Structure probing data (2A3 and DMS) for a 177-nucleotide construct. The 2A3 profile rests on 3,259 reads. The DMS profile rests on 1,975 reads. It was measured as part of the RMDB library 15KREP.
RNA sequence: GGGAACGACUCGAGUAGAGUCGAAAAGCCUCUCACCUGCUUAUGCACCAACAUAUGUUAGUGUUGAUGACAAGUAUAAGACGAGUGAUGAGCUUUGCGUGAAUCUUAAUUUACCCGCAAAUGUCCCGAUUCUACGGAAGUUCGCUUCCGUAGAAUCAAAAGAAACAACAACAACAAC
Reactivity to 2A3 in 0.01 (KOAc 150mM, MgCl2 10mM, bicine 150mM(pH8.5), 24C), signal-to-noise 3, nucleotides 027 to 126: g000c010c010u000c010u000c010a000c010c020u040g030c000u020u000a000u010g000c000a000c010c010a010a010c010a010u100a030u230g300u220u170a140g020u020g010u010u020g030a090u070g000a040c060a160a070g020u020a020u000a020a020g070a090c070g000a020g060u010g000a020u140g000a000g000c000u000u030u030g000c010g010u040g040a050a070u040c030u100u130a170a110u170u080u100a130c020c020c000g000c000a020a040a040u050g010u000c020c000c010
Reactivity to DMS in 0.01 (KOAc 150mM, MgCl2 10mM, bicine 150mM(pH8.5), 24C), signal-to-noise 3, nucleotides 027 to 126: g000c120c050u010c020u000c010a000c000c010u000g000c000u000u000a010u010g040c020a100c040c000a000a030c030a010u000a110u010g040u000u010a140g020u000g020u000u000g000a080u020g000a160c210a100a100g020u000a020u000a010a010g000a120c100g020a150g010u000g000a030u020g010a020g020c010u000u000u000g020c010g000u000g010a050a090u010c240u010u010a080a070u000u000u010a130c130c110c030g000c020a020a050a080u010g000u000c010c010c010